[RMDB]
Annotation
Source: RMDB library M2RFPK, as collected in RNAgym. Chemical mapping of a 207-nucleotide RNA with 2A3. Values cover nucleotides 27 to 156.
RNA sequence: GGGAACGACUCGAGUAGAGUCGAAAAACACCAAAACUGAAAACGGAAGGCAAUCCUUCGACGACGAUACUUACUUUCCUUUGAUCGUCGUUACUACUGGCAUAGCCACAAAGGAGAACAAACAUGAGCGCGGACACUGACUUCGGUCAGUGUCCAACGAUGUCAGGUUGUUCGCAACCUGACAUCGAAAAGAAACAACAACAACAAC
Reactivity to 2A3 in 0.01 (KOAc 150mM, MgCl2 10mM, bicine 150mM(pH8.5), 24C), signal-to-noise 2, nucleotides 027 to 156: a000c080a100c080c060a050a140a050a000c120u140g040a050a030a010a040c130g140g000a010a000g040g010c020a080a260u200c010c020u030u090c070g000a000c010g000a000c000g000a000u130a260c030u020u010a000c030u080u130u110c000c050u030u030u040g030a020u000c000g010u020c000g000u020u010a010c010u040a050c020u030g010g000c040a210u080a070g010c020c010a030c050a050a050a000g000g030a020g030a080a010c030a050a060a000c020a100u260g130a010g060c120g020c040g110g000a000c000a000c010u000g000a020c020u040u040c170g000g000u000c000a000g000u000g000u000c000c000a000a020